The record gives the reactivity of an RNA of 177 nucleotides to 2A3. The reactions ran in a buffer of 150 mM KOAc, 10 mM MgCl2 and 150 mM bicine (pH 8.5), at 24 C. 2A3 adducts were read by reverse transcription with SuperScript II with manganese.
RNA sequence: GGGAACGACUCGAGUAGAGUCGAAAAAUCUAAAUUGCCUCGAAUAAUAUCAUUUAACUUUCUACUACCUAAACUGCCGCCCAUAACAAGUAACACUUUUUUGUCAUUAGUAAAGUUAGUUAAAUGAAGCCCAGAUUAUUUUCGAAUAAUCUGGGCUAAAAGAAACAACAACAACAAC
Reactivity to 2A3 in 0.01 (KOAc 150mM, MgCl2 10mM, bicine 150mM(pH8.5), 24C), signal-to-noise 1, nucleotides 027 to 126: a000u000c010u040a110a040a000u150u040g150c020c000u090c020g090a030a040u190a210a040u030a020u100c070a000u000u040u000a000a000c000u010u000u020c000u020a120c000u040a050c000c020u100a080a120a060c000u040g000c030c020g000c000c000c000a050u090a070a000c030a040a000g000u050a030a000c010a020c050u130u040u170u120u000u070g110u110c110a090u060u040a000g030u000a000a300a000g000u000u040a010g000u000u000a000a120a080u000g050a000